[RMDB]
RNA sequence: GGGAACGACUCGAGUAGAGUCGAAAAGAGAGAUCCAUGGUAUAGCUGGGACCAGCCGGGCCUGAGGUUGAACUGGGGUGAACCGAUGCACUGGCACCUAGACAUGUACAACAGGAACCGUGUGGAUACAUCCCCCACACCUGUUUCUUGGCAUGUCGUUCCGUUAUAGAUUCGUCUAUAACGGAACAAAAGAAACAACAACAACAAC
Reactivity to DMS in 0.01 (KOAc 150mM, MgCl2 10mM, bicine 150mM(pH8.5), 24C), signal-to-noise 1, nucleotides 027 to 156: g000a160g000a050g000a060u010c020c060a110u010g010g020u000a080u000a050g030c060u000g030g000g020a090c030c030a090g000c000c050g010g050g020c010c020u010g020a140g010g010u010u010g010a150a120c070u010g050g030g050g030u000g010a010a070c060c030g010a110u000g000c070a080c050u010g000g000c010a050c030c020u010a200g000a020c010a050u000g040u000a170c040a080a100c050a170g020g000a040a050c060c300g000u000g010u010g010g010a180u000a030c040a090u000c010c060c020c000c000a030c000a010c030c030u000g000u000u000u000c010u000u000g000g000c030a090u000g000u000c030
Reactivity to 2A3 in 0.01 (KOAc 150mM, MgCl2 10mM, bicine 150mM(pH8.5), 24C), signal-to-noise 2, nucleotides 027 to 156: g070a000g010a000g000a020u000c020c000a050u100g050g020u100a110u060a130g040c020u040g010g000g050a060c010c060a030g060c020c010g030g000g000c010c020u060g060a080g030g020u040u090g030a100a030c030u070g010g000g020g050u050g040a020a020c010c000g000a040u090g020c060a030c120u030g020g000c030a070c030c020u000a020g020a020c000a000u010g010u070a190c030a090a010c020a110g020g010a030a010c020c020g010u010g010u000g000g010a050u100a280c040a300u070c010c020c000c010c000a000c000a000c000c010u050g000u000u020u000c010u020u010g010g000c000a020u030g000u020c000